[RMDB]
Structure probing data (2A3 and DMS) for a 207-nucleotide construct. 2A3 adducts were read by reverse transcription with SuperScript II with manganese. For 2A3, 13,818 sequencing reads were counted. Reactivities are given for positions 27 through 156. Conditions: 150 mM KOAc, 10 mM MgCl2 and 150 mM bicine (pH 8.5), 24 C. Values are in units of 0.01, from 0 to 300, in steps of 10.
RNA sequence: GGGAACGACUCGAGUAGAGUCGAAAACAGUUUCUCCUUCGGGAGAAACUGAAAACCUUUGUGGUUACACUUCAACAGCCAUACUGACCCAUUGGGUCAAGUAUGGACAUGAAGGGUAACCACUCUGGUAAAAGUUAUUGACGUUCGCGUCAAUAACGUAUAAGAGAUAGUUCGCUAUCUCUUAUACAAAAGAAACAACAACAACAAC
Reactivity to 2A3 in 0.01 (KOAc 150mM, MgCl2 10mM, bicine 150mM(pH8.5), 24C), signal-to-noise 7, nucleotides 027 to 156: c000a000g000u000u000u010c010u010c020c010u050u150c260g080g000g000a010g000a000a000a000c000u000g010a020a010a000a000c000c000u010u000u010g010u000g010g000u000u010a000c020a000c000u000u000c000a080a110c040a180g040c010c000a000u000a010c000u010g000a000c000c020c110a300u130u300g010g000g000u000c000a000a020g000u000a000u000g000g020a010c000a060u030g000a000a000g010g000g000u000a000a000c000c000a000c000u000c000u010g010g010u050a110a140a030a020g000u000u000a000u000u000g010a010c020g020u050u070c300g020c000g120u000c000a000a000u000a000a000c010
Reactivity to DMS in 0.01 (KOAc 150mM, MgCl2 10mM, bicine 150mM(pH8.5), 24C), signal-to-noise 3, nucleotides 027 to 156: c000a000g010u000u010u000c010u010c000c010u010u000c280g080g010g010a010g000a020a000a010c010u010g000a040a060a110a080c010c000u000u000u010g000u000g010g010u010u000a010c000a020c010u000u000c000a050a090c100a280g000c000c000a040u000a010c000u000g000a020c000c000c010a300u000u020g060g010g030u000c020a000a070g030u000a000u000g000g000a020c110a300u000g010a010a010g020g000g030u000a010a010c000c000a000c000u000c030u000g030g000u000a030a060a080a170g010u000u000a000u000u000g000a020c010g030u000u000c300g050c030g030u010c000a030a010u000a000a010c000